[RMDB]
RNA sequence: GGGAACGACUCGAGUAGAGUCGAAAAGCCAGGCAGAGACGCUCCUCACUUCCCAGACGGGGUGGCGGCCGGGCAGAGGCUGCAAUCUCGGCACUUUGGGAGGCUAAGGCAGGCAGCUGGGAGGUGGAACUCCUUAGCGGUUCGCCGCUAAGGAGUUAAAAGAAACAACAACAACAAC
Reactivity to DMS in 0.01 (KOAc 150mM, MgCl2 10mM, bicine 150mM(pH8.5), 24C), signal-to-noise 1, nucleotides 027 to 126: g000c040c010a080g000g000c030a100g000a120g000a100c090g010c020u010c020c020u000c150a130c050u010u000c010c000c010a100g000a130c070g010g000g000g060u000g010g020c030g060g000c000c020g000g000g040c150a070g000a180g010g020c010u010g020c020a050a040u020c030u000c030g010g030c080a070c130u000u020u010g000g000g020a020g010g010c070u000a070a070g000g020c160a040g010g000c040a090g010c050u000g010g000g020a050g000g010u000g010g000